The record gives the reactivity of an RNA of 177 nucleotides to 2A3 and DMS.
Reactivities are given for positions 27 through 126.
The DMS profile rests on 656 reads.
It was measured as part of the RMDB library M2PK50.
[RMDB]
RNA sequence: GGGAACGACUCGAGUAGAGUCGAAAACAACGACACUUCGGUGUCGUUGAAAUAAAAGCUCGAAUAAUAAUAAAGUGCAGAGCAAGGACAGAAAAUAAAUAAAAAGGAAAGAGUUCGCUCUUUCCAAGAUAUUAGUAGACUUCGGUCUACUAAUAUCAAAAGAAACAACAACAACAAC
Reactivity to 2A3 in 0.01 (KOAc 150mM, MgCl2 10mM, bicine 150mM(pH8.5), 24C), signal-to-noise 1, nucleotides 027 to 126: c000a000a000c000g000a000c000a000c000u060u050c180g020g010u010g010u000c010g000u000u000g000a000a000a000u130a010a140a000a020g000c010u010c030g010a050a070u130a200a070u210a100a020u100a070a300a050g090u060g040c010a000g000a010g050c040a000a030g020g030a030c080a080g160a120a090a000a040u270a070a080a060u230a070a070a010a000a020g010g000a010a010a000g010a000g020u050u100c220g090c040u000c000u000u000u010c000c000a000a000
Reactivity to DMS in 0.01 (KOAc 150mM, MgCl2 10mM, bicine 150mM(pH8.5), 24C), signal-to-noise 1, nucleotides 027 to 126: c000a000a030c000g000a000c000a000c000u000u010c240g010g000u000g030u010c000g030u020u000g010a010a080a190u000a050a130a130a140g000c000u000c000g030a050a090u010a140a040u000a100a060u000a020a150a150g000u000g040c230a060g000a010g000c020a060a100g010g000a080c140a080g000a110a130a040a080u040a050a060a050u010a130a030a080a160a110g000g000a000a010a010g000a010g020u000u030c250g010c010u000c000u000u000u010c000c000a040a010